[RMDB]
RNA sequence: GGGAACGACUCGAGUAGAGUCGAAAAAUCCGCGGAGAGCGGAAGGAUGGGAAAGCAUGCUGCAUGCGAAAGGAUGGAUAUCGCAUAGCGUACAUGCCGUACGGAAACCAUCCCCCAUCCGAAACGUACGUCCGGAUGGGAAAGCAUGCCCCGUACGCAUUAGAGAUGAAUUCGUUCAUCUCUAAUGAAAAGAAACAACAACAACAAC
Reactivity to DMS in 0.01 (KOAc 150mM, MgCl2 10mM, bicine 150mM(pH8.5), 24C), signal-to-noise 4, nucleotides 027 to 156: a080u000c000c010g030c000g010g020a160g030a300g000c000g000g020a070a060g020g000a060u000g000g020g000a110a120a090g010c030a020u000g030c040u020g010c030a040u010g010c000g010a040a050a100g020g000a100u010g010g000a150u000a110u000c020g030c010a010u000a110g040c000g000u010a060c050a030u000g030c020c010g040u000a040c030g000g000a130a080a130c010c000a040u010c010c020c020c010c000a030u000c000c000g000a010a010a050c090g020u000a090c160g010u000c010c010g010g020a060u010g020g020g010a080a040a090g000c040a060u000g000c030c010c000c020g020u000a080c120g000
Reactivity to 2A3 in 0.01 (KOAc 150mM, MgCl2 10mM, bicine 150mM(pH8.5), 24C), signal-to-noise 7, nucleotides 027 to 156: a000u010c020c010g000c040g030g160a300g010a020g080c020g010g010a020a010g020g010a020u050g010g000g050a080a090a070g000c000a000u010g020c040u080g000c020a010u020g010c020g030a090a040a050g130g060a070u220g060g030a070u080a050u200c010g000c020a020u060a090g020c010g020u070a050c000a030u060g050c010c000g020u010a030c020g000g030a060a020a010c000c000a000u000c000c000c000c000c000a000u000c000c000g010a050a070a020c060g070u200a020c070g010u000c030c000g000g000a000u010g010g010g000a050a000a000g030c020a030u080g010c010c000c000c000g000u000a010c010g000

Structure probing data (DMS and 2A3) for a 207-nucleotide construct.
2A3 adducts were read by reverse transcription with SuperScript II with manganese.
For 2A3, 12,681 sequencing reads were counted.
The DMS profile rests on 10,339 reads.